[RMDB]
The data come from the RNA Mapping Database (RMDB), library OK3TST.
Chemical mapping of a 207-nucleotide RNA with 2A3.
The RNA was probed in 150 mM KOAc, 10 mM MgCl2 and 150 mM bicine (pH 8.5) at 24 C.

RNA sequence: GGGAACGACUCGAGUAGAGUCGAAAAUGCAUUUUAUUGAACUGAUUUAGCCCUUCAGUCUACAUUUCAUCAUUCAUAUUGACUUUGCUCACACAAUGGGUAGGCCAUUGAACGAAGGGCAGAACUACAUCUUCUAUAUGCAGAGGGUCAUAAAUCACCGGACAUUUGAUUUCGAUCAAAUGUCCGGAAAAGAAACAACAACAACAAC
Reactivity to 2A3 in 0.01 (KOAc 150mM, MgCl2 10mM, bicine 150mM(pH8.5), 24C), signal-to-noise 1, nucleotides 027 to 156: u090g030c010a020u000u030u110u300a230u140u140g060a120a000c030u000g010a080u010u090u090a010g000c010c010c000u000u010c000a040g000u020c000u050a060c070a190u100u190u070c090a120u010c040a100u120u110c020a070u200a060u230u110g020a030c090u080u300u180g010c000u120c040a020c000a010c000a070a020u050g000g050g000u000a030g060g020c000c000a070u000u050g070a110a020c090g020a040a040g030g000g000c000a000g000a010a010c060u100a030c020a030u000c000u010u000c000u000a010u000a000u090g000c000a000g110a030g040g010g010u040c030a060u090a090a030a030u150c100a050